[RMDB]
RNA sequence: GGGAACGACUCGAGUAGAGUCGAAAAGAUAUGGAUUCAUCAUGUACCGUCGCUAGGCAACAGCUCGGUAUCGGAAACGAUAUUUCGAGACAUGCCUAAAAGUCGGUACAUGAUGAAUCCUAAGUCACGCAGAAAGAAAGUUCGCUUUCUUUCUGCGAAAAGAAACAACAACAACAAC
Reactivity to DMS in 0.01 (KOAc 150mM, MgCl2 10mM, bicine 150mM(pH8.5), 24C), signal-to-noise 1, nucleotides 027 to 126: g010a040u020a300u010g010g020a000u000u000c000a000u000c000a010u000g000u000a000c010c000g020u000c010g000c260u000a010g030g020c000a040a120c280a250g040c010u010c000g000g000u000a030u000c000g010g010a290a050a170c010g000a040u000a010u000u000u060c000g050a010g010a040c140a230u040g050c000c000u010a010a010a040a110g010u000c000g020g000u000a000c000a000u000g000a000u000g000a010a000u000c000c010u000a020a100g000u000c060a300